[RMDB]
RNA sequence: GGGAACGACUCGAGUAGAGUCGAAAACGUUGUCAUCGACAACACCCUAUGCAUUCAUGCUCUGUAAGGAUGCGCCGAAAGGUGAGCAAGCCCGAGUUGCCCAGACCUGAAAUGGAACACUUUAGAGAAAACCCGAAGCAGUUCGCUGCUUCGGGAAGAUCAUAGAUAGGUUCGCCUAUCUAUGAUCAAAAGAAACAACAACAACAAC
Reactivity to DMS in 0.01 (KOAc 150mM, MgCl2 10mM, bicine 150mM(pH8.5), 24C), signal-to-noise 3, nucleotides 027 to 156: c090g000u000u010g000u000c010a200u010c120g000a060c000a040a050c000a120c020c020c010u000a070u010g010c030a070u000u010c040a150u000g020c010u000c050u000g020u000a300a190g000g020a060u000g010c050g060c010c010g010a140a130a140g010g040u010g000a080g020c010a150a170g010c010c040c030g010a110g010u000u000g000c010c010c020a100g000a100c020c010u000g000a090a080a100u020g030g000a060a140c050a080c030u000u010u000a080g010a190g000a030a100a100a160c020c010c000g020a040a010g000c000a030g020u010u010c300g020c060u000g010c010u000u000c000g020g020g000a000a000
Reactivity to 2A3 in 0.01 (KOAc 150mM, MgCl2 10mM, bicine 150mM(pH8.5), 24C), signal-to-noise 2, nucleotides 027 to 156: c090g000u000u000g010u010c100a230u150c300g010a000c000a010a000c010a060c000c000c000u040a040u080g000c020a010u020u000c030a060u170g000c000u010c010u010g010u020a020a000g000g010a000u000g000c010g000c000c010g090a140a040a030g010g000u020g000a000g000c020a030a010g020c000c040c020g090a030g040u040u060g030c000c000c010a030g020a100c010c030u040g010a060a040a060u140g030g020a080a000c030a040c080u090u210u180a130g020a010g030a090a110a030a040c000c000c000g000a000a000g010c000a000g020u080u130c180g040c140u020g000c000u000u000c010g000g010g000a000a000